[RMDB]
RNA sequence: GGGAACGACUCGAGUAGAGUCGAAAAAUUAUCAACCAAAUUCCACUUCCCUGCUGUCCUGCAGUGUCAUGCAGUUCGAUAAAGAAUUCAAGUGUACCUCCUGGGAUUUUGAAAGAGAAAGCAACUACUGGUAGGAUUAUUUCGAUAAUCCUACCAGAAAAGAAACAACAACAACAAC
Reactivity to DMS in 0.01 (KOAc 150mM, MgCl2 10mM, bicine 150mM(pH8.5), 24C), signal-to-noise 2, nucleotides 027 to 126: a070u010u000a120u020c040a090a170c080c050a030a080a110u010u000c030c020a080c110u000u000c010c010c010u000g010c060u000g010u000c030c000u010g020c040a020g010u000g000u000c100a060u000g030c060a030g030u000u000c030g000a110u010a060a090a110g000a080a040u000u010c060a050a110g010u010g000u000a080c030c030u000c030c030u000g000g000g020a070u000u020u020u030g000a070a080a100g010a070g010a040a050a110g020c070a030a050c110u010a120
Reactivity to 2A3 in 0.01 (KOAc 150mM, MgCl2 10mM, bicine 150mM(pH8.5), 24C), signal-to-noise 1, nucleotides 027 to 126: a000u240u170a090u060c000a030a040c010c010a000a060a090u050u020c030c000a020c040u020u010c010c010c000u000g090c030u020g050u050c000c030u020g000c020a020g000u060g050u230c070a010u030g010c030a050g040u000u040c030g020a030u090a210a160a050g020a050a020u140u040c070a090a060g000u020g000u060a110c000c000u050c010c010u080g030g010g100a100u080u120u040u110g040a050a030a000g160a030g090a030a120a000g180c030a060a010c000u300a020